[RMDB]
Structure probing data (DMS and 2A3) for a 177-nucleotide construct.

RNA sequence: GGGAACGACUCGAGUAGAGUCGAAAAUAAUUGCUCGGGUGCGGAGCUAUGGCACCAGGGCUGUCCGGUGGGGGCACGCCACCUGUGACAGCUGCGUUCGAGCCACUGGUCCCUGCUCCGAAGGGGCGCUAGCGUGGGCCUUCGGGCCCAUGCUAGUAAAAGAAACAACAACAACAAC
Reactivity to DMS in 0.01 (KOAc 150mM, MgCl2 10mM, bicine 150mM(pH8.5), 24C), signal-to-noise 5, nucleotides 027 to 126: u050a050a060u030u030g010c010u010c000g000g040g020u030g000c020g000g000a030g000c040u020a040u030g010g020c200a040c010c000a060g000g000g000c000u010g000u010c010c000g000g010u000g010g020g000g020g020c090a030c170g010c010c000a010c000c000u030g020u060g020a020c020a000g010c000u020g000c030g010u010u030c160g010a170g010c010c300a110c030u010g000g000u010c150c000c010u020g000c000u000c000c010g010a140a080g000g000g010g000c030
Reactivity to 2A3 in 0.01 (KOAc 150mM, MgCl2 10mM, bicine 150mM(pH8.5), 24C), signal-to-noise 8, nucleotides 027 to 126: u110a010a070u110u100g000c010u010c010g100g060g020u160g060c010g020g030a030g020c080u110a160u210g060g000c030a010c000c010a020g010g030g000c000u000g000u000c000c020g000g000u010g000g030g020g080g300c080a030c080g130c000c000a010c000c030u080g100u210g020a000c000a000g000c010u030g020c000g030u070u200c100g030a030g020c020c000a060c030u020g000g000u000c010c010c010u010g000c000u000c000c000g040a070a060g020g000g000g000c010
Conditions: 150 mM KOAc, 10 mM MgCl2 and 150 mM bicine (pH 8.5), 24 C.
Reactivities are rounded to 0.1 and cut off at 0 and 3.
In probing experiments dimethyl sulfate is read out at A N1 and C N3, which are open when not base-paired.
The 2A3 profile rests on 10,775 reads.